[RMDB]
RNA sequence: GGGAACGACUCGAGUAGAGUCGAAAAGAUAUGGAUUCCAUGUGGCUAGCGACCGAUCGGAAACGAUCGAAGUCGCUUGGACCCACUGGAAUCCUAAGUCAAAACACUGUCAGUUCGCUGACAGUGACGGUACAUUCCUCUUCGGAGGAAUGUACCGAAAAGAAACAACAACAACAAC
Reactivity to DMS in 0.01 (KOAc 150mM, MgCl2 10mM, bicine 150mM(pH8.5), 24C), signal-to-noise 2, nucleotides 027 to 126: g020a010u010a300u010g000g000a000u000u000c000c000a000u000g010u010g000g000c120u000a040g020c020g010a000c000c000g000a000u010c000g020g000a050a080a190c010g000a000u000c020g010a100a230g010u000c000g010c000u000u000g010g000a130c300c000c000a020c030u000g000g000a050a000u000c000c000u010a000a080g010u000c010a160a140a150a270c020a000c010u000g020u000c000a030g010u000u000c300g020c010u000g020a000c030a020g000u010g030a020